RNA sequence: GGGAACGACUCGAGUAGAGUCGAAAAAGUCUCUUUUGGUAUAAGCGUCAAGUCCAUCGGAGAGAUCAUCAUUUUGUUCAUCUUAAUGCCCUUUUGUGUAGGAAAUUGAGGGAAGUUUAGGCUUCUCCUCUGUACCCCCAUUCGUGGGGGUACAGAGAAAAGAAACAACAACAACAAC
Reactivity to DMS in 0.01 (KOAc 150mM, MgCl2 10mM, bicine 150mM(pH8.5), 24C), signal-to-noise 2, nucleotides 027 to 126: a120g040u020c010u000c020u000u000u000u000g020g010u000a070u020a110a060g010c030g010u000c160a010a100g030u000c060c030a050u000c060g000g010a100g020a070g010a030u030c040a040u010c060a030u010u030u020u000g010u010u010c080a130u000c020u010u020a050a040u000g000c140c010c010u000u000u000u000g060u000g000u000a060g000g000a020a060a130u020u010g000a060g010g010g010a020a000g010u000u000u000a100g010g020c000u000u000c000u010c010
Reactivity to 2A3 in 0.01 (KOAc 150mM, MgCl2 10mM, bicine 150mM(pH8.5), 24C), signal-to-noise 1, nucleotides 027 to 126: a000g000u040c000u020c000u040u060u060u080g120g010u120a040u010a170a050g030c000g050u050c070a020a020g060u000c010c030a040u090c050g000g020a010g010a000g010a050u110c000a010u010c020a000u020u080u070u040g150u010u100c050a120u030c000u020u070a040a020u090g010c000c000c000u030u040u080u050g110u030g010u020a020g050g060a070a090a060u180u160g000a030g000g040g050a010a010g020u150u050u150a140g130g010c040u020u010c030u010c010